[RMDB]
RNA sequence: GGGAACGACUCGAGUAGAGUCGAAAAGAUAUGGACAUGACGGUAUUUGCCGUACUAUUCGGAAACGAACGAAUACGGAACUACAAAGACGAAGUGUCCUAAGUCAAAACGUCCGUUCGCGGACGAAUCCUUACAACGUGUUCGCACGUUGUAAGGAAAAAGAAACAACAACAACAAC
Reactivity to 2A3 in 0.01 (KOAc 150mM, MgCl2 10mM, bicine 150mM(pH8.5), 24C), signal-to-noise 3, nucleotides 027 to 126: g010a020u060a050u140g000g000a000c000a010u040g010a030c010g010g080u300a080u040u070u040g050c000c000g000u000a040c070u030a060u010u020c000g030g060a120a120a060c060g000a030a020c040g050a130a000u020a030c020g020g060a070a020c030u250a060c220a020a050a010g050a010c010g010a040a010g000u000g000u020c000c000u010a110a030g070u030c030a010a010a120a160c000g000u000c020c010g010u060u080c300g000c000g080g000a000c000g010a010a050
Reactivity to DMS in 0.01 (KOAc 150mM, MgCl2 10mM, bicine 150mM(pH8.5), 24C), signal-to-noise 3, nucleotides 027 to 126: g000a070u010a300u010g000g000a010c020a010u000g010a300c060g000g010u010a150u000u000u000g000c010c000g000u000a040c100u010a220u000u000c000g000g000a100a050a170c040g000a010a010c090g020a130a090u000a000c020g000g000a080a010c080u010a280c020a020a050a010g000a140c000g000a090a260g020u000g000u010c000c000u000a040a110g000u010c010a070a030a070a190c020g000u000c000c000g000u000u000c210g000c010g000g010a020c020g000a050a050
Overview
The record gives the reactivity of an RNA of 177 nucleotides to 2A3 and DMS. For DMS, 1,908 sequencing reads were counted. It was measured as part of the RMDB library TTRDEL. Conditions: 150 mM KOAc, 10 mM MgCl2 and 150 mM bicine (pH 8.5), 24 C.